[RMDB]
RNA sequence: GGGAACGACUCGAGUAGAGUCGAAAAUCUGCAGAUCCUAUGGAAUGGUUUGUAUACCUUCAAGCCCAACAUUUCACUUUGCCAGACAAAGUAAAUGAUUUUGGACAAAAGGAGUGUAAGAAGAUACGAAUAGAACCUCUUUCGAGAGGUUCUAUUCAAAAGAAACAACAACAACAAC
Reactivity to DMS in 0.01 (KOAc 150mM, MgCl2 10mM, bicine 150mM(pH8.5), 24C), signal-to-noise 4, nucleotides 027 to 126: u000c020u000g020c000a020g010a160u000c010c010u000a120u010g010g010a070a020u000g010g000u000u000u020g010u000a110u000a020c010c000u000u000c020a150a210g030c020c000c010a010a050c000a000u000u000u000c290a000c000u000u000u000g010c010c210a180g020a200c010a010a000a020g000u000a000a010a010u000g010a230u000u010u010u000g000g000a040c010a090a090a100a040g000g010a030g010u000g010u010a040a070g010a050a080g000a150u000a050c190
Reactivity to 2A3 in 0.01 (KOAc 150mM, MgCl2 10mM, bicine 150mM(pH8.5), 24C), signal-to-noise 3, nucleotides 027 to 126: u010c000u030g000c000a010g050a300u010c000c030u090a100u140g060g070a110a080u090g000g100u090u100u220g130u170a130u070a060c000c000u000u000c020a080a040g020c000c000c000a000a040c000a030u010u050u040c040a010c010u030u000u010g040c030c110a090g030a300c010a070a000a000g000u010a000a000a010u010g010a060u000u060u040u070g000g000a010c020a000a110a020a000g010g010a050g000u020g010u050a150a090g010a040a000g060a130u100a130c080